[RMDB]
RNA sequence: GGGAACGACUCGAGUAGAGUCGAAAACAUGCUGCCUUCGGGCAGCAUGAAAAAAACCUUUGUGCGAUGAUAGCAUCGAUCAUACCCAGCCCAUUGGGCUGCGGUAUGGGAGCUACAUCGCACUCUGGUAAAAAACAGCUGGGUUCGCCCAGCUGAACUUGUACGGAUGGUUCGCCAUCCGUACAAGAAAAGAAACAACAACAACAAC
Reactivity to 2A3 in 0.01 (KOAc 150mM, MgCl2 10mM, bicine 150mM(pH8.5), 24C), signal-to-noise 1, nucleotides 027 to 156: c000a000u000g010c010u010g000c000c000u040u120c300g020g010g000c010a000g000c000a020u010g000a010a000a000a000a000a000a040c000c000u000u000u000g000u000g010c010g000a000u000g120a250u020a000g010c080a250u260c070g010a050u100c000a000u000a000c000c000c000a010g000c000c000c080a300u180u300g000g000g000c010u020g010c120g010g010u000a000u020g000g000g000a010g000c000u000a000c000a000u000c000g000c000a000c000u000c000u010g000g000u010a020a220a000a100a020a000c000a010g040c000u000g000g000g110u070u060c160g110c040c000c000a000g070c010u000g030a010a100
An RNA of 207 nucleotides, treated with 2A3 and read out base by base. For 2A3 the reverse transcriptase was SuperScript II with manganese. The RNA was probed in 150 mM KOAc, 10 mM MgCl2 and 150 mM bicine (pH 8.5) at 24 C. The 2A3 profile rests on 721 reads. Values are in units of 0.01, from 0 to 300, in steps of 10.